[RMDB]
RNA sequence: GGGAACGACUCGAGUAGAGUCGAAAAUCCCGCCCGCGGCACACAGUCACCCGCCCGAGUGAACGUCACCAACUCGGCUGGAUUCCAAGCUGGUUGCCUGUCCUACGCUCAGCGCAACAACCGCAGACAGAUUAAGAAGGUUCGCCUUCUUAAUCUGAAAAGAAACAACAACAACAAC
Reactivity to DMS in 0.01 (KOAc 150mM, MgCl2 10mM, bicine 150mM(pH8.5), 24C), signal-to-noise 3, nucleotides 027 to 126: u000c000c000c010g010c120c040c030g010c050g000g010c020a060c130a170c050a040g000u000c070a130c040c010c040g000c210c020c020g020a040g020u000g010a070a130c120g000u000c070a070c040c030a120a050c040u000c000g020g020c040u000g000g020a140u000u000c090c080a070a100g010c040u000g010g030u010u010g010c020c020u000g000u000c030c020u020a070c070g000c040u010c030a050g010c140g000c020a060a070c040a050a100c040c060g020c080a140g000a230
Reactivity to 2A3 in 0.01 (KOAc 150mM, MgCl2 10mM, bicine 150mM(pH8.5), 24C), signal-to-noise 2, nucleotides 027 to 126: u000c020c000c000g030c000c010c020g030c000g010g000c040a030c010a000c010a050g020u020c030a030c040c010c010g030c010c020c010g010a010g010u060g040a110a030c030g120u040c030a010c060c000a060a020c010u000c030g000g000c010u020g000g010a080u120u080c020c000a090a000g020c020u000g010g030u030u030g000c000c010u010g030u020c010c040u040a040c020g010c040u040c020a010g000c020g030c130a010a040c000a050a000c050c030g060c020a010g030a080